[RMDB]
Structure probing data (DMS and 2A3) for a 207-nucleotide construct. For DMS, 2,529 sequencing reads were counted. Reactivities are given for positions 27 through 156.
RNA sequence: GGGAACGACUCGAGUAGAGUCGAAAAUCAAGCUUCGGCUUGAACUUAGCGUACUACUUUCAAUGACGCCGUUGUGUCUUUGAUCAGCUCCCAAAUAGGAGCUGGGAGACAUGACGGUAAGACAGAAAGUAUCGCGGAUCUAUUGCUUCGGCAAUAACCGUAUACGAAGGUUCGCCUUCGUAUACGGAAAAGAAACAACAACAACAAC
Reactivity to DMS in 0.01 (KOAc 150mM, MgCl2 10mM, bicine 150mM(pH8.5), 24C), signal-to-noise 1, nucleotides 027 to 156: u000c010a000a030g000c030u020u010c280g060g040c010u000u000g000a030a080c040u010u010a080g030c010g010u000a100c090u000a020c000u000u000u010c010a150a110u010g000a160c150g020c030c000g030u000u010g010u010g000u000c000u000u000u010g020a160u010c010a010g020c000u000c000c020c030a080a150a230u040a030g010g010a020g020c010u000g010g010g000a010g000a010c020a020u000g030a000c000g010g010u000a010a040g020a250c040a110g010a010a020a020g000u000a020u010c050g030c050g000g000a050u030c050u000a060u000u000g030c020u010u000c140g010g010c040a030a070u000a040a180
Reactivity to 2A3 in 0.01 (KOAc 150mM, MgCl2 10mM, bicine 150mM(pH8.5), 24C), signal-to-noise 5, nucleotides 027 to 156: u050c010a010a000g000c010u080u240c300g140g010c000u000u040g010a060a040c100u160u200a050g010c000g030u050a130c030u000a000c000u030u020u000c090a200a280u180g040a100c100g000c000c000g000u010u000g020u000g010u000c000u120u080u160g130a190u170c000a000g000c000u020c010c000c010a180a270a080u300a110g000g000a010g000c000u000g000g010g000a000g000a000c000a000u000g020a000c000g000g000u000a000a000g020a000c020a010g040a030a020a010g050u050a050u300c000g000c000g020g050a040u030c040u060a040u020u010g000c010u020u080c190g130g000c000a020a010u050a030a050
2A3 adducts were read by reverse transcription with SuperScript II with manganese. The RNA was probed in 150 mM KOAc, 10 mM MgCl2 and 150 mM bicine (pH 8.5) at 24 C. As a SHAPE reagent, 2A3 marks flexible, mostly unpaired nucleotides at the ribose 2'-OH. It was measured as part of the RMDB library RNAMAK.